[RMDB]
RNA sequence: GGGAACGACUCGAGUAGAGUCGAAAAUUACGUACGCAAGAAGAUAUGCUACAACCUAUUGAGACGGGGGAGAUCUUGUUUAGUCAAGAUGCGCAGAGCCUGAUUCCUUCGCGCAGCAGUGGCACGGGCACGUGGACGUAUUCGUACGUCCACGUGCAAAAGAAACAACAACAACAAC
Reactivity to 2A3 in 0.01 (KOAc 150mM, MgCl2 10mM, bicine 150mM(pH8.5), 24C), signal-to-noise 1, nucleotides 027 to 126: u150u040a050c080g010u000a000c070g000c030a040a010g090a110a030g010a120u110a040u300g010c000u000a010c010a030a130c000c000u070a110u060u240g080a090g010a040c080g050g000g000g000g000a060g010a000u000c010u000u040g050u070u150u030a210g150u070c010a010a030g000a040u040g020c030g000c070a050g020a010g140c000c010u110g050a210u150u020c000c000u000u060c010g000c000g000c030a090g000c030a020g010u060g010g000c020a010c140g000g040
Reactivity to DMS in 0.01 (KOAc 150mM, MgCl2 10mM, bicine 150mM(pH8.5), 24C), signal-to-noise 1, nucleotides 027 to 126: u000u000a190c090g000u010a050c150g050c050a040a050g000a110a210g000a110u000a040u000g030c030u010a070c090a090a060c060c020u000a050u010u000g010a060g010a110c000g000g000g000g020g010a200g010a010u000c030u030u010g010u000u000u030a120g000u000c010a000a020g000a000u000g010c030g000c100a050g000a120g030c070c050u000g020a130u000u000c050c010u020u010c050g010c040g010c040a030g030c110a110g000u000g000g050c050a080c180g010g030